[RMDB]
Chemical mapping of a 177-nucleotide RNA with 2A3 and DMS. Reactivities are given for positions 27 through 126. For 2A3, 2,580 sequencing reads were counted.
RNA sequence: GGGAACGACUCGAGUAGAGUCGAAAACGGCCUCGGCCUGUCAGCGGCCAGAGUACUCUGAGGAUCACGGCCGAUGCGCACUGUAUGGUACUCAGCGCGCAGCGCAGUACGCAGGAUCUAGGCGCGCCUGUCCUUUAGGGUUCGCCCUAAAGGACAGAAAAGAAACAACAACAACAAC
Reactivity to 2A3 in 0.01 (KOAc 150mM, MgCl2 10mM, bicine 150mM(pH8.5), 24C), signal-to-noise 2, nucleotides 027 to 126: c020g100g000c010c030u020c020g030g000c000c010u060g120u100c010a020g070c020g000g000c000c000a040g000a020g060u080a090c040u030c060u090g110a100g090g050a090u150c050a040c100g000g000c000c000g040a030u050g030c020g020c000a030c020u050g010u140a140u140g230g040u090a050c040u030c090a030g000c020g000c000g000c030a020g060c020g000c050a020g020u050a030c030g020c020a010g030g060a070u020c040u090a040g050g040c080g000c000g030c030
Reactivity to DMS in 0.01 (KOAc 150mM, MgCl2 10mM, bicine 150mM(pH8.5), 24C), signal-to-noise 3, nucleotides 027 to 126: c090g020g010c020c010u010c100g000g000c010c000u000g010u000c110a110g020c120g020g000c020c000a080g000a060g020u000a030c060u000c060u000g000a140g000g010a080u010c100a120c110g000g010c020c010g010a090u000g010c020g010c010a040c010u000g000u000a110u000g030g010u010a090c130u010c080a070g000c030g010c010g030c020a050g010c070g010c040a050g020u000a020c070g010c010a020g000g000a050u010c050u000a100g020g000c010g020c030g000c050